[RMDB]
RNA sequence: GGGAACGACUCGAGUAGAGUCGAAAACCCAAAAAUUUUCCGGUGGCCACCCGCCCGGGCCACCGUUGCUCCACUCCACUCCUUCGGGACUGGUUUGGAGGAACAUAACAGGGCUAAAACAAAACAACAUAAAUCGCUAUUUCGAUAGCGAUUUAUGAAAAGAAACAACAACAACAAC
Reactivity to DMS in 0.01 (KOAc 150mM, MgCl2 10mM, bicine 150mM(pH8.5), 24C), signal-to-noise 1, nucleotides 027 to 126: c020c030c010a010a020a050a110a070u010u010u050u010c110c090g020g010u000g040g000c010c000a030c090c070c300g010c010c010c000g060g010g020c010c020a000c000c030g010u000u000g030c030u010c000c010a030c030u000c000c020a010c170u000c000c000u000u020c150g020g010g000a000c070u000g040g050u000u000u000g050g010a000g000g010a040a010c090a140u040a140a100c150a080g000g020g030c000u040a050a080a100a080c150a050a020a120a050c240a100a160
Reactivity to 2A3 in 0.01 (KOAc 150mM, MgCl2 10mM, bicine 150mM(pH8.5), 24C), signal-to-noise 5, nucleotides 027 to 126: c010c000c000a050a050a030a090a100u110u100u070u040c050c020g000g000u000g000g000c000c000a040c040c090c080g010c000c010c000g010g000g000c000c000a000c000c000g000u000u060g020c000u000c000c000a000c000u000c000c000a010c000u000c000c000u020u070c220g060g000g000a000c010u010g000g000u000u000u000g000g000a000g000g010a030a030c060a110u280a090a050c040a070g000g000g000c010u030a050a060a000a010c080a020a090a010a020c050a040a010